[RMDB]
RNA sequence: GGGAACGACUCGAGUAGAGUCGAAAAGGAUCUAGGAUCGACAGUGACGGCCACAGGCCUGCGCGUACGUCGAUCGGUACGAUCGCGAUCCUGGCCGGCGCGUACGUCGCUGCGUACAUCGACAGAGCACCUUGUCCGACUUCGGUCGGACAAGGUGAAAAGAAACAACAACAACAAC
Reactivity to DMS in 0.01 (KOAc 150mM, MgCl2 10mM, bicine 150mM(pH8.5), 24C), signal-to-noise 2, nucleotides 027 to 126: g010g010a100u010c030u010a120g020g000a080u000c020g000a060c040a190g020u000g010a020c080g030g000c010c000a040c080a050g030g030c050c000u010g020c060g000c080g030u000a080c160g010u010c020g010a030u000c020g020g030u000a030c220g000a070u000c020g030c020g000a100u000c030c030u000g020g010c030c040g010g000c090g010c120g010u000a090c020g020u010c010g030c040u000g000c090g000u000a070c090a100u010c070g000a160c190a020g000a100g010
Reactivity to 2A3 in 0.01 (KOAc 150mM, MgCl2 10mM, bicine 150mM(pH8.5), 24C), signal-to-noise 1, nucleotides 027 to 126: g070g020a020u030c030u070a070g100g080a030u060c000g070a070c000a030g030u020g060a040c020g030g030c000c000a200c060a190g020g000c020c000u080g010c080g000c030g030u080a170c030g000u050c010g170a090u080c010g000g000u090a030c020g050a100u050c000g000c020g080a010u030c000c050u010g060g000c030c010g070g000c080g000c070g060u130a140c010g000u070c000g020c010u020g000c000g010u010a090c030a100u030c000g000a040c030a080g050a030g080
Chemical mapping of a 177-nucleotide RNA with DMS and 2A3. DMS adducts were read by reverse transcription with MarathonRT. The RNA was probed in 150 mM KOAc, 10 mM MgCl2 and 150 mM bicine (pH 8.5) at 24 C. For DMS, 1,144 sequencing reads were counted.